[RMDB]
RNA sequence: GGGAACGACUCGAGUAGAGUCGAAAAGAAGAUGAUGUGUAGGAUAGGUGGGAGGCUUUGAAGUGUGGACGCCAGUCUCCAUGGAGCCGACCUUGAAAUACCACCCUUUAAUGAAAAACAAAUACAAUCUCUUCUCAAGUUUCGACUUGAGAAGAGAAAAAGAAACAACAACAACAAC
Reactivity to DMS in 0.01 (KOAc 150mM, MgCl2 10mM, bicine 150mM(pH8.5), 24C), signal-to-noise 1, nucleotides 027 to 126: g000a080a060g000a070u000g010a000u000g030u010g030u010a000g010g000a090u030a010g010g000u000g000g030g010a130g060g000c010u000u000u010g010a060a110g020u000g000u000g010g000a010c030g000c090c290a090g020u000c010u000c170c030a030u000g010g030a050g000c020c000g010a050c140c010u020u000g000a030a110a070u000a080c020c000a020c050c010c030u000u000u000a030a080u000g000a050a070a060a100a070c110a090a040a100u010a070c220a110a140

Chemical mapping of a 177-nucleotide RNA with DMS. DMS (dimethyl sulfate) methylates the pairing face of unpaired adenines and cytosines. It was measured as part of the RMDB library M2PK90.